The data come from the RNA Mapping Database (RMDB), library OK2TST.
Structure probing data (DMS and 2A3) for a 177-nucleotide construct.
2A3 adducts were read by reverse transcription with SuperScript II with manganese.
RNA sequence: GGGAACGACUCGAGUAGAGUCGAAAACUACGUGACCCAGAGACAGGGGAACAAGAUCGACAGGCACCCGCCUACAGGGAGCCACCCACAUGUCAGGAAUGGGCGAGACGCAGGGGGGGAAGACCACAGUAGUACCGUAGUUCGCUACGGUACUACUAAAAGAAACAACAACAACAAC
Reactivity to DMS in 0.01 (KOAc 150mM, MgCl2 10mM, bicine 150mM(pH8.5), 24C), signal-to-noise 2, nucleotides 027 to 126: c040u020a030c100g010u000g000a270c020c000c010a080g000a230g000a010c050a080g000g010g000g000a160a060c110a150a090g000a070u020c160g060a100c100a100g050g010c010a160c010c000c050g000c130c140u010a090c130a100g000g000g010a080g020c050c000a040c030c040c000a080c100a120u000g010u010c050a070g000g020a130a160u000g000g000g000c030g010a050g040a040c080g020c060a080g000g010g000g000g010g000g050a130a040g000a040c020c080a090c150
Reactivity to 2A3 in 0.01 (KOAc 150mM, MgCl2 10mM, bicine 150mM(pH8.5), 24C), signal-to-noise 2, nucleotides 027 to 126: c000u120a060c000g060u020g100a100c030c000c030a010g030a000g000a090c100a060g000g020g000g020a050a000c000a060a000g130a230u170c110g100a060c040a100g030g040c020a040c000c030c040g150c110c080u230a090c090a000g030g000g010a000g040c020c010a030c020c000c010a030c030a140u090g060u040c050a030g000g160a110a110u100g020g050g000c040g080a050g010a010c040g000c110a050g040g000g000g050g000g000g000a040a010g020a010c050c020a060c010

Notes:
For DMS, 989 sequencing reads were counted.